[RMDB]
RNA sequence: GGGAACGACUCGAGUAGAGUCGAAAAGUUCGUGCCUAGUGAAAAAAUAAGCUAGGGCAGCUUGGCUUAUAGCUUAGCUGACGGCGGGAAAAACCACCUAAGUCUUUGGAUAUGGUCGAGUAUCCUGCGACGCAUCAUGAUUCGUCAUGAUGCGUCGAAAAGAAACAACAACAACAAC
Reactivity to DMS in 0.01 (KOAc 150mM, MgCl2 10mM, bicine 150mM(pH8.5), 24C), signal-to-noise 2, nucleotides 027 to 126: g000u000u010c050g060u020g010c030c000u040a000g020u000g000a020a020a140a080a050a080u010a140a240g000c050u000a010g000g000g000c000a010g020c030u000u010g000g030c010u000u050a140u080a090g000c000u000u000a020g030c000u000g000a150c100g000g010c000g020g000g000a000a030a040a080a140c210c300a030c040c010u000a020a120g000u010c010u000u050u050g000g010a040u000a300u000g030g000u000c040g000a020g000u000a230u000c020c030u000g000
Reactivity to 2A3 in 0.01 (KOAc 150mM, MgCl2 10mM, bicine 150mM(pH8.5), 24C), signal-to-noise 3, nucleotides 027 to 126: g040u040u070c030g060u060g190c000c000u010a050g000u040g140a150a100a020a000a000a000u050a040a010g010c020u030a000g000g050g000c000a000g000c000u000u010g030g000c030u140u110a070u060a210g000c000u020u020a000g000c010u020g040a030c030g070g000c020g000g030g050a000a080a050a050a030c020c030a070c020c000u070a090a070g060u030c000u110u190u120g030g010a020u030a020u120g110g000u090c010g000a010g000u010a010u030c010c000u000g000